[RMDB]
RNA sequence: GGGAACGACUCGAGUAGAGUCGAAAACUCGUGGGAGAGGUAGCUGUACACGUCUCCCGAGGACGCUACGGUGUGACACUGCAUGUGCGACCCACGGAUGGAAUCUCCGCACCGCAACCUUCUUGCCAAGGACGAACGAUUCGCCGAGCACCGCCUCAGUCAGACAUUUGUUCGCAAAUGUCUGACUAAAAGAAACAACAACAACAAC
Reactivity to 2A3 in 0.01 (KOAc 150mM, MgCl2 10mM, bicine 150mM(pH8.5), 24C), signal-to-noise 1, nucleotides 027 to 156: c010u020c000g080u070g000g000g010a060g010a000g030g010u040a070g000c120u130g040u200a090c230a040c070g070u000c000u000c010c030c020g000a020g000g000a020c060g040c040u150a010c020g000g000u070g030u060g070a050c050a020c140u120g090c100a100u220g010u070g000c000g040a050c000c000c000a020c050g110g010a090u150g050g040a020a020u100c000u000c070c000g000c020a000c050c030g000c000a030a070c010c000u040u130c020u080u300g090c090c050a060a020g030g000a080c060g100a010a060c000g020a040u140u000c000g000c060c010g000a000g030c000a060c060c020g000c000c000u030c020
An RNA of 207 nucleotides, treated with 2A3 and read out base by base. 2A3 adducts were read by reverse transcription with SuperScript II with manganese. The RNA was probed in 150 mM KOAc, 10 mM MgCl2 and 150 mM bicine (pH 8.5) at 24 C. For 2A3, 632 sequencing reads were counted.